Conditions: 150 mM KOAc, 10 mM MgCl2 and 150 mM bicine (pH 8.5), 24 C. This 207-nucleotide RNA was probed chemically with 2A3. 2A3 adducts were read by reverse transcription with SuperScript II with manganese. For 2A3, 465 sequencing reads were counted.
RNA sequence: GGGAACGACUCGAGUAGAGUCGAAAAACACCAAAACUGAAAACGGAAGGCAAUCCUUCCACGACGAUACUUAGUUUCCUUUGAUCGUCGUUACUACUGGCAUAGCCACAAAGGAGAACAAACAUGAGCGCGGACACUGACUUCGGUCAGUGUCCAAUCUUGCAAUGGACUUCGGUCCAUUGCAAGAAAAAGAAACAACAACAACAAC
Reactivity to 2A3 in 0.01 (KOAc 150mM, MgCl2 10mM, bicine 150mM(pH8.5), 24C), signal-to-noise 1, nucleotides 027 to 156: a010c110a190c000c050a140a060a050a070c130u160g060a020a070a030a040c110g010g000a020a000g000g000c150a030a160u170c020c000u000u000c000c000a000c000g000a000c000g030a000u150a160c000u040u050a050g060u150u010u050c000c000u010u030u050g000a000u000c000g000u000c000g020u030u060a050c020u020a020c000u000g020g020c040a300u160a090g100c030c020a040c060a020a020a000g010g060a040g030a060a050c050a050a090a000c030a060u140g040a030g150c130g020c160g120g000a020c010a000c000u000g000a000c000u010u170c300g000g010u020c000a000g020u000g000u010c000c000a000a000